RNA sequence: GGGAACGACUCGAGUAGAGUCGAAAACUCGCAGCAGGCGCUGCUGUUCGCCUUCGUCUACGAGUGCCCGAGUUGGGCGCGCCUGGUUCAGACGCCCGCAGGUGAUUUCUACGCCCUGAGCAAAGCGACAAGGAUUAAGGUUCGCCUUAAUCCUUGUAAAAGAAACAACAACAACAAC
Reactivity to 2A3 in 0.01 (KOAc 150mM, MgCl2 10mM, bicine 150mM(pH8.5), 24C), signal-to-noise 3, nucleotides 027 to 126: c000u000c010g000c000a000g000c010a000g040g020c030g040c050u250g050c070u050g100u120u100c020g000c000c000u060u150c070g120u000c010u010a030c020g020a010g020u020g040c000c000c010g040a060g070u240u220g010g000g000c030g010c000g030c000c020u080g030g030u140u140c050a060g020a220c070g060c020c010c020g000c030a010g000g040u030g030a100u070u200u120c010u060a030c030g010c000c010c040u040g010a070g060c080a070a080a020g060c030g070
Reactivity to DMS in 0.01 (KOAc 150mM, MgCl2 10mM, bicine 150mM(pH8.5), 24C), signal-to-noise 7, nucleotides 027 to 126: c010u000c010g030c040a020g030c030a060g000g020c020g020c120u010g030c110u000g010u010u000c020g010c010c010u000u010c170g010u020c010u000a020c010g010a030g010u000g010c020c010c010g000a110g010u010u010g010g000g010c030g010c040g010c030c010u000g000g010u000u010c060a100g010a190c080g010c040c050c050g000c050a040g020g010u000g000a130u010u000u010c070u010a230c060g010c020c010c010u000g000a120g010c120a070a100a100g010c110g010
This 177-nucleotide RNA was probed chemically with 2A3 and DMS.
The DMS profile rests on 11,464 reads.
For DMS the reverse transcriptase was MarathonRT.
In probing experiments dimethyl sulfate is read out at A N1 and C N3, which are open when not base-paired.
The reactions ran in a buffer of 150 mM KOAc, 10 mM MgCl2 and 150 mM bicine (pH 8.5), at 24 C.
As a SHAPE reagent, 2A3 marks flexible, mostly unpaired nucleotides at the ribose 2'-OH.